[RMDB]
RNA sequence: GGGAACGACUCGAGUAGAGUCGAAAAGGCACCCAGAAUAUCGAGAAUUCGUGUUCGACAGUGUCAUUCCGCUGAAGUUUCCGAAUCUGAGCUAAAGUUAUGAUGUCAGCCCAUACUGAUGGCCAUCAAACUGUGGUAGUGUGUAGAGAGAAAACCAGGGUAUGCUUUUAUUCGUAAAAGCAUACCCAAAAGAAACAACAACAACAAC
Reactivity to 2A3 in 0.01 (KOAc 150mM, MgCl2 10mM, bicine 150mM(pH8.5), 24C), signal-to-noise 2, nucleotides 027 to 156: g020g000c010a020c000c000c000a000g020a030a070u150a080u180c020g010a030g100a140a160u210u060c000g000u010g050u030u010c010g000a020c020a050g000u000g010u000c020a030u050u000c020c000g000c090u060g080a090a020g020u020u030u020c030c050g020a020a080u010c030u040g030a060g000c020u050a130a100a010g030u080u050a140u130g000a010u050g060u110c090a000g090c060c000c000a070u120a190c070u150g090a100u070g020g000c000c010a030u020c000a030a040a040c020u000g020u120g080g020u040a080g000u020g010u000g030u130a020g020a000g040a000g030a050a030a040a020c100c200a000
Reactivity to DMS in 0.01 (KOAc 150mM, MgCl2 10mM, bicine 150mM(pH8.5), 24C), signal-to-noise 2, nucleotides 027 to 156: g030g070c000a050c000c040c010a300g000a050a070u000a020u010c010g030a100g010a140a200u000u010c010g030u010g090u000u000c010g000a230c300a040g020u000g050u000c010a210u000u000c020c000g060c040u010g000a080a300g010u010u000u000c010c050g000a080a130u000c050u010g020a110g000c020u010a050a090a100g010u000u000a110u000g010a010u000g010u000c020a000g000c030c050c180a070u000a150c040u000g020a020u000g020g030c070c030a080u020c070a050a020a040c020u010g010u000g020g020u000a080g040u000g010u020g000u010a050g000a100g000a120g000a090a060a010a160c070c020a180